[RMDB]
RNA sequence: GGGAACGACUCGAGUAGAGUCGAAAAUGCUGGUGGAGGAGAAGACAAAGCUGGCUUGCCAGCCAGAGGGCUUCUACGGCCCUCUCACAGAGCGGGAAGUGGUGGACUUGAGGGAGAAGAUUGACCACACAUGUUCGACAUUCGUGUCGAACAUGUGAAAAGAAACAACAACAACAAC
Reactivity to DMS in 0.01 (KOAc 150mM, MgCl2 10mM, bicine 150mM(pH8.5), 24C), signal-to-noise 3, nucleotides 027 to 126: u000g010c040u000g020g000u010g000g020a120g000g000a110g010a130a080g010a130c160a060a150a190g000c010u000g000g000c060u000u000g040c030c020a030g030c030c120a040g010a030g010g000g000c000u000u010c260u010a110c300g000g000c010c010c000u010c000u000c050a050c120a060g000a170g000c110g000g010g000a120a170g000u030g010g000u010g000g000a120c170u000u000g000a160g000g000g000a110g000a120a080g010a080u000u000g000a070c060c040a170
Reactivity to 2A3 in 0.01 (KOAc 150mM, MgCl2 10mM, bicine 150mM(pH8.5), 24C), signal-to-noise 2, nucleotides 027 to 126: u100g000c010u020g030g040u040g060g020a060g020g070a090g020a080a060g040a070c040a010a080a010g010c010u010g010g010c000u030u070g030c020c000a000g000c000c010a000g000a000g010g010g000c010u090u100c120u220a080c010g030g000c000c020c010u030c000u000c000a060c010a020g070a020g020c050g000g010g030a090a000g050u100g080g100u140g030g030a080c070u060u110g030a060g020g040g000a030g020a050a000g080a040u080u200g070a030c030c000a040

About this RNA:
Chemical mapping of a 177-nucleotide RNA with DMS and 2A3. The DMS profile rests on 1,562 reads. The 2A3 profile rests on 2,029 reads. The reactions ran in a buffer of 150 mM KOAc, 10 mM MgCl2 and 150 mM bicine (pH 8.5), at 24 C. It was measured as part of the RMDB library OK2TRN.